[RMDB]
RNA sequence: GGGAACGACUCGAGUAGAGUCGAAAAUUCUCAGCGCGUGCUUGAGCACGAUAUUGGGGAAGGACACGCCCUUGAGCCGCGCGGUGCGGAUAUAUUGCGCCGUCAUCACCUCGGUCAUCGAGGCGCGGUGCAUCAUACCCUUCGGGGUAUGAUGCACAAAAGAAACAACAACAACAAC
Reactivity to 2A3 in 0.01 (KOAc 150mM, MgCl2 10mM, bicine 150mM(pH8.5), 24C), signal-to-noise 3, nucleotides 027 to 126: u010u000c000u000c030a070g010c050g000c000g030u070g010c000u100u250g090a040g010c040a030c040g010a030u030a050u150u130g030g010g020g010a000a090g070g010a030c060a020c120g070c030c010c050u020u020g020a020g020c000c000g010c000g000c010g010g010u010g000c010g060g090a010u020a020u010a020u250u180g050c010g000c020c010g040u080c030a110u060c030a050c010c020u000c000g070g010u170c080a170u220c080g020a000g000g020c010g010c000g030
Reactivity to DMS in 0.01 (KOAc 150mM, MgCl2 10mM, bicine 150mM(pH8.5), 24C), signal-to-noise 3, nucleotides 027 to 126: u030u000c000u000c000a100g040c290g040c010g000u000g060c030u010u010g000a160g000c030a000c030g020a120u060a040u020u000g000g000g000g000a100a100g000g000a160c150a210c070g000c000c050c000u000u010g010a060g000c000c020g000c300g000c130g000g020u000g010c000g000g020a070u030a100u010a100u040u030g010c020g010c000c020g010u020c080a030u000c140a110c110c000u000c010g000g000u030c150a090u050c000g000a010g000g050c050g000c020g000